[RMDB]
Chemical mapping of a 177-nucleotide RNA with DMS. DMS adducts were read by reverse transcription with MarathonRT.

RNA sequence: GGGAACGACUCGAGUAGAGUCGAAAAGAAAACAUGGAAACAUGCAGGUGGCCACCCGCCCGGGCCACCGUUACUCCACUCCACUCCUUCGGGACUCGUUUGGAGGAACAUAACAGGGCAAAAAAAAUACCUGUGUUAUGUUCGCAUAACACAGGUAAAAAGAAACAACAACAACAAC
Reactivity to DMS in 0.01 (KOAc 150mM, MgCl2 10mM, bicine 150mM(pH8.5), 24C), signal-to-noise 1, nucleotides 027 to 126: g000a150a130a050a230c000a000u000g010g000a230a160a160c000a000u000g000c040a130g040g000u010g000g150c000c020a000c060c040c170g000c050c000c000g010g000g020c000c000a030c000c000g000u000u000a010c000u000c030c030a000c070u000c000c120a050c300u000c000c020u010u000c080g000g000g040a010c070u010c300g010u000u000u000g000g000a020g000g000a010a000c010a070u020a220a090c130a070g010g030g000c030a020a000a000a000a050a050a020a050
It was measured as part of the RMDB library M2PK90. The RNA was probed in 150 mM KOAc, 10 mM MgCl2 and 150 mM bicine (pH 8.5) at 24 C.